[RMDB]
RNA sequence: GGGAACGACUCGAGUAGAGUCGAAAAAGAUCUCCUGGUCACUAGAAUGGAGGGAUCCGCAUGAGGCUGGUUUUACAGAGCAGUGAACACUUCCUUCUCUUGACAGUGGAGGGAUCACAGGCUGCAGCAGCUCGGUAACAUUCGUGUUACCGAGCUGAAAAGAAACAACAACAACAAC
Reactivity to DMS in 0.01 (KOAc 150mM, MgCl2 10mM, bicine 150mM(pH8.5), 24C), signal-to-noise 2, nucleotides 027 to 126: a060g000a090u020c010u010c010c010u040g020g010u000c040a090c040u000a140g010a060a040u020g070g000a020g020g010g020a100u010c080c250g000c040a080u000g020a190g000g000c000u000g000g000u000u050u030u050a060c070a050g000a070g000c040a070g010u020g000a070a090c240a200c100u020u000c000c000u010u020c000u000c020u000u000g050a050c100a170g030u010g000g000a090g000g000g000a050u000c020a060c130a120g010g020c020u000g010c070a130g020
Reactivity to 2A3 in 0.01 (KOAc 150mM, MgCl2 10mM, bicine 150mM(pH8.5), 24C), signal-to-noise 2, nucleotides 027 to 126: a000g050a030u000c010u000c000c000u010g100g000u040c020a030c060u060a030g020a050a070u300g010g010a030g000g010g000a040u060c040c110g000c080a060u090g030a090g120g000c000u010g010g110u070u090u140u210a090c020a010g160a020g050c080a030g000u050g120a100a030c120a070c020u000u060c030c000u000u000c000u000c000u020u070g070a060c020a080g060u060g080g010a130g040g020g000a000u000c030a000c030a050g130g010c040u080g030c000a060g000